Structure probing data (DMS and 2A3) for a 177-nucleotide construct. For DMS, 2,312 sequencing reads were counted. Values cover nucleotides 27 to 126. For 2A3, 4,159 sequencing reads were counted. For 2A3 the reverse transcriptase was SuperScript II with manganese. The data come from the RNA Mapping Database (RMDB), library OK1LIB.
RNA sequence: GGGAACGACUCGAGUAGAGUCGAAAACAUUAGCUACCAGGUCAUAAGCCAUUGCUUGAUAGCUAAAAUCAUGUAAUAUUGGCGCAAAAGGGUCCAGUGUUCAAUCAUGCAGAGACGCUGCUCAGCCGCUGCAUACUUACUUCGGUAAGUAUGCAGCAAAAGAAACAACAACAACAAC
Reactivity to DMS in 0.01 (KOAc 150mM, MgCl2 10mM, bicine 150mM(pH8.5), 24C), signal-to-noise 2, nucleotides 027 to 126: c110a190u000u000a000g010c030u000a010c050c030a000g010g010u010c170a080u010a100a180g000c190c160a050u000u000g010c000u000u020g000a040u000a010g010c000u000a020a030a050a060u020c160a090u020g000u030a010a100u010a070u000u030g000g020c000g070c130a060a040a140a110g000g010g000u010c010c010a000g070u000g000u030u000c120a080a130u050c110a110u000g000c130a090g000a200g000a040c010g020c020u000g020c000u000c030a110g000c150c050
Reactivity to 2A3 in 0.01 (KOAc 150mM, MgCl2 10mM, bicine 150mM(pH8.5), 24C), signal-to-noise 5, nucleotides 027 to 126: c030a050u040u000a000g000c000u010a010c000c010a010g000g070u110c050a070u070a140a090g100c050c010a050u040u090g010c020u000u010g000a000u010a010g000c020u020a000a010a030a090u200c130a080u100g050u140a140a000u010a100u150u140g020g000c040g000c130a080a060a070a070g090g010g010u100c100c040a030g030u010g060u130u050c050a040a100u080c040a030u150g130c080a010g030a010g010a130c010g000c020u020g000c000u030c050a050g020c030c030